[RMDB]
RNA sequence: GGGAACGACUCGAGUAGAGUCGAAAAAGGAGUAAUCCUAAACAGGGUUUUCACCCUUCCUUUAGUUUCCUUCCUCUCCUGGAGGGGUCUUCUGCCCUAGCCCGGUCUUCGAAGCUUCCUUUGGCUAUCAAUGUUUAUUCUUCGGAAUAAACAUUGAAAAAGAAACAACAACAACAAC
Reactivity to DMS in 0.01 (KOAc 150mM, MgCl2 10mM, bicine 150mM(pH8.5), 24C), signal-to-noise 4, nucleotides 027 to 126: a000g010g000a050g020u010a050a060u000c120c010u000a020a040a050c220a030g000g000g000u000u010u010u010c200a090c020c010c000u000u010c020c010u000u000u000a050g010u000u010u000c000c010u000u010c020c020u000c080u000c060c030u000g010g010a060g010g000g010g010u000c020u000u000c050u000g000c020c020c020u000a090g010c050c060c160g020g000u010c060u010u000c080g000a090a140g010c080u000u000c020c010u000u010u010g010g010c090u010a120
Reactivity to 2A3 in 0.01 (KOAc 150mM, MgCl2 10mM, bicine 150mM(pH8.5), 24C), signal-to-noise 2, nucleotides 027 to 126: a000g030g000a030g020u080a110a020u060c010c000u000a000a010a080c300a030g050g000g020u100u130u250u300c100a070c000c000c000u000u010c000c010u000u030u030a030g000u020u080u050c010c000u050u040c000c010u040c010u010c010c060u030g000g030a020g030g030g020g000u040c010u110u010c030u080g010c000c000c020u020a050g010c000c010c030g020g010u030c030u070u060c060g060a050a000g020c000u080u050c000c000u090u110u070g060g000c000u020a010